This 177-nucleotide RNA was probed chemically with DMS. For DMS the reverse transcriptase was MarathonRT.
RNA sequence: GGGAACGACUCGAGUAGAGUCGAAAAAAGGAGGAGAGUCCCGCCAGGGGUGAUCCACCCGGAGAUGAGCGGAGAAACCACAUCCAGAGGACCCCUUCGACGAACAGAAGACCCUGGACCGGGAGGGCCUAUAUAUUCCCUUCGGGGAAUAUAUAGGAAAAGAAACAACAACAACAAC
Reactivity to DMS in 0.01 (KOAc 150mM, MgCl2 10mM, bicine 150mM(pH8.5), 24C), signal-to-noise 1, nucleotides 027 to 126: a190a080g010g010a090g020g020a100g030a300g000u000c000c030c030g010c080c080a150g000g000g020g030u000g020a130u000c030c080a110c070c000c040g020g010a140g020a080u000g010a140g000c060g000g030a220g010a080a070a080c040c020a140c090a190u000c000c050a020g000a100g000g000a070c040c060c150c020u000u000c030g010a050c110g010a210a070c130a050g030a010a070g000a140c030c030c000u020g000g010a080c120c030g010g010g010a050g000g000g000
Values cover nucleotides 27 to 126.